[RMDB]
The data come from the RNA Mapping Database (RMDB), library M2RFPK. This 207-nucleotide RNA was probed chemically with 2A3.

RNA sequence: GGGAACGACUCGAGUAGAGUCGAAAAGAACUUUGGCCGGCUCGGAAUAGAAUCAGGGGGUGCAAACUGCCCACUGGCAGAAAGGAUUAUAGCAAAUGCGUACCCUAUUGCACUACAGCCCGGCCAACAUAGACUACUCUAUUCGUAGAGUAGUCAACAACACGUGAUCCUUCGGGAUCACGUGUUGAAAAGAAACAACAACAACAAC
Reactivity to 2A3 in 0.01 (KOAc 150mM, MgCl2 10mM, bicine 150mM(pH8.5), 24C), signal-to-noise 1, nucleotides 027 to 156: g020a070a020c060u000u080u000g000g000c000c000g000g020c030u060c120g000g070a190a090u130a090g110a130a070u160c050a130g040g000g010g000g000u070g010c000a010a000a080c000u040g000c000c030c110a230c180u130g030g000c000a000g100a060a040a000g060g010a040u130u140a090u150a200g040c080a130a060a210u300g000c010g030u070a040c040c000c000u040a120u000u100g000c010a000c000u090a030c040a000g030c070c000c000g000g000c000c000a000a000c000a010u080a010g010a000c000u000a000c000u000c000u000a050u120u080c230g040u010a000g000a000g000u010a000g000u000c000a000a000
Values cover nucleotides 27 to 156.